Structure probing data (2A3 and DMS) for a 207-nucleotide construct.
RNA sequence: GGGAACGACUCGAGUAGAGUCGAAAACACUGUGCCACAGCUUGCCUAUAAUGGUUGCCUCUAUGCUCUUAAAAAGACAUAUGCUGCAACUGUAGGACUUCAAACCGAAGAGGGUGUUGACGGCUUUUAUGCUUUUGACCAUUGUCAAUUACCAGUACUACUAAGGUGGAUUCGUCCACCUUAGUAGAAAAGAAACAACAACAACAAC
Reactivity to 2A3 in 0.01 (KOAc 150mM, MgCl2 10mM, bicine 150mM(pH8.5), 24C), signal-to-noise 7, nucleotides 027 to 156: c040a010c030u070g050u130g110c010c020a040c010a020g030c040u080u090g040c000c010u120a100u090a190a150u180g080g010u050u060g010c000c010u010c000u030a030u030g060c040u020c020u050u090a140a090a010a040a000g010a000c000a000u020a020u170g020c030u010g020c010a000a000c000u020g030u040a050g010g030a040c000u080u040c080a100a130a130c050c050g050a050a020g040a080g040g040g030u030g010u010u020g020a030c020g000g040c000u110u080u050u080a100u160g050c010u070u090u040u130g040a060c020c060a160u080u180g030u030c010a020a050u100u090a070c010c040a020g060u120a060
Reactivity to DMS in 0.01 (KOAc 150mM, MgCl2 10mM, bicine 150mM(pH8.5), 24C), signal-to-noise 3, nucleotides 027 to 156: c070a050c050u000g000u000g040c010c030a110c080a060g020c050u000u000g020c060c010u000a050u030a090a090u020g030g010u010u000g000c010c040u000c030u000a040u000g030c080u000c030u000u010a070a110a140a170a150g000a020c010a030u000a040u010g040c030u000g000c000a030a030c030u000g030u000a090g000g020a120c060u000u000c040a060a070a090c060c020g010a090a090g010a120g000g020g020u000g000u000u010g000a120c050g010g010c030u030u000u010u000a090u010g000c030u000u000u010u010g010a090c040c070a300u000u020g010u000c010a020a070u000u000a090c030c300a040g000u000a150